Record summary:
An RNA of 177 nucleotides, treated with 2A3 and DMS and read out base by base. The 2A3 profile rests on 58,653 reads. For DMS, 46,953 sequencing reads were counted. The RNA was probed in 150 mM KOAc, 10 mM MgCl2 and 150 mM bicine (pH 8.5) at 24 C.

RNA sequence: GGGAACGACUCGAGUAGAGUCGAAAACGGCUGCACGGUAAUCGGCACCGUCAGCAGGGGUCGUAUGUAACUUGCCGCCAGCCCACGCGAUGCUGGACUCGUCGACCUCGAAGUCGGGGUAACGGGACAUAUGCGUAAUAUUCGUAUUACGCAUAUGAAAAGAAACAACAACAACAAC
Reactivity to 2A3 in 0.01 (KOAc 150mM, MgCl2 10mM, bicine 150mM(pH8.5), 24C), signal-to-noise 9, nucleotides 027 to 126: c030g020g000c010u020g000c060a010c070g010g030u080a110a080u090c020g030g000c030a020c010c010g040u030c010a020g000c020a020g020g000g010g010u020c030g020u130a100u180g190u070a120a120c070u040u070g010c010c010g010c010c010a020g000c000c020c000a040c050g110c060g090a080u120g010c010u030g010g050a080c010u000c020g040u030c070g090a040c010c000u010c020g030a250a040g200u290c020g000g000g010g010u010a040a010c010g000g010g020a010
Reactivity to DMS in 0.01 (KOAc 150mM, MgCl2 10mM, bicine 150mM(pH8.5), 24C), signal-to-noise 9, nucleotides 027 to 126: c120g010g010c020u000g010c190a040c030g000g010u000a080a080u000c050g010g010c030a080c010c000g000u000c040a030g020c030a200g010g000g000g030u000c030g010u010a050u010g010u010a090a110c220u000u000g010c020c020g000c180c010a060g000c010c020c040a100c150g020c120g010a090u000g010c030u000g010g010a200c020u000c020g010u000c090g000a030c110c000u000c010g010a170a140g010u010c020g020g000g000g000u000a130a040c040g000g000g010a300
Background: For DMS the reverse transcriptase was MarathonRT.